The record gives the reactivity of an RNA of 207 nucleotides to 2A3. The RNA was probed in 150 mM KOAc, 10 mM MgCl2 and 150 mM bicine (pH 8.5) at 24 C. Values cover nucleotides 27 to 156. 2A3 adducts were read by reverse transcription with SuperScript II with manganese.

RNA sequence: GGGAACGACUCGAGUAGAGUCGAAAAUCUGCAUUUUUGAUAUAUAGUGCGACAAGAUGUCCAGAAUUCUCGGAAUUAUGAACGGUUCUAGCAUCUGGUGAUUCACUAGGGUCUGCAGAACCUUGGCGAGGGCCAAAACCCUUGACAGCCUCACGGCACCUAGGCUUCUUUUCGAAGAAGCCUAGGUAAAAGAAACAACAACAACAAC
Reactivity to 2A3 in 0.01 (KOAc 150mM, MgCl2 10mM, bicine 150mM(pH8.5), 24C), signal-to-noise 2, nucleotides 027 to 156: u020c020u010g010c050a070u080u120u120u120u200g080a060u130a050u080a000u100a170g020u040g120c030g050a040c070a040a030g020a040u010g050u080c080c030a050g020a070a080u220u110c110u040c020g040g120a150a080u280u170a180u300g070a100a030c040g000g000u000u040c000u010a080g000c020a020u020c020u020g110g040u100g090a250u120u170c030a010c020u000a020g030g010g040u080c060u040g000c010a000g020a040a030c000c000u000u020g020g020c040g010a000g030g000g020c050c010a000a110a100a100c020c020c000u010u060g050a010c040a010g070c000c030u050c040a060c020g050g000c010